Structure probing data (2A3 and DMS) for a 207-nucleotide construct.
Source: RMDB library OK3TST, as collected in RNAgym.
Reactivities are given for positions 27 through 156.
Values are in units of 0.01, from 0 to 300, in steps of 10.
For DMS, 5,797 sequencing reads were counted.
RNA sequence: GGGAACGACUCGAGUAGAGUCGAAAAAAAUCUCUCAAGAUGGGUUAGGGUCUUGGAAGCAUCUAAUAGGGAAAAUGUUGAAUUGGUAGUCGUCAGUGUAUGUACUGAUUCAACAAUAGGAUUAUGGCCAUCUCCUGUGAGACCAUCCAAUGUAGGAUAUAUCGUUACGUUUCGACGUAACGAUAUAAAAAGAAACAACAACAACAAC
Reactivity to 2A3 in 0.01 (KOAc 150mM, MgCl2 10mM, bicine 150mM(pH8.5), 24C), signal-to-noise 4, nucleotides 027 to 156: a000a000a000u040c020u020c000u020c010a020a030g030a050u040g010g020g040u120u150a080g020g000g030u020c030u020u050g060g050a060a010g050c020a040u050c030u160a110a130u110a190g090g010g020a040a050a040a120u070g000u000u000g000a000a000u000u010g050g000u050a040g110u090c090g020u040c090a140g080u050g040u280a070u100g090u010a000c000u000g000a000u000u030c000a000a000c020a010a050u050a040g010g010a020u080u040a040u190g010g030c010c000a020u000c010u020c040c020u050g020u060g040a030g010a030c000c010a040u020c020c020a080a060u150g040u090a120g000g060a010
Reactivity to DMS in 0.01 (KOAc 150mM, MgCl2 10mM, bicine 150mM(pH8.5), 24C), signal-to-noise 3, nucleotides 027 to 156: a060a030a050u000c010u000c020u000c040a050a080g000a110u000g010g000g020u010u000a090g010g010g020u000c030u000u000g050g020a060a080g010c120a070u000c060u010a070a130u000a100g030g000g000a090a030a090a110u000g010u000u000g000a030a030u000u000g020g040u000a070g030u000c070g020u020c150a180g030u010g020u010a050u000g010u000a010c020u000g010a020u010u000c000a000a040c010a050a120u000a080g020g010a120u000u000a120u000g020g020c000c030a160u000c040u000c040c020u000g010u000g010a150g000a060c020c010a100u000c000c010a030a100u010g020u000a130g010g010a220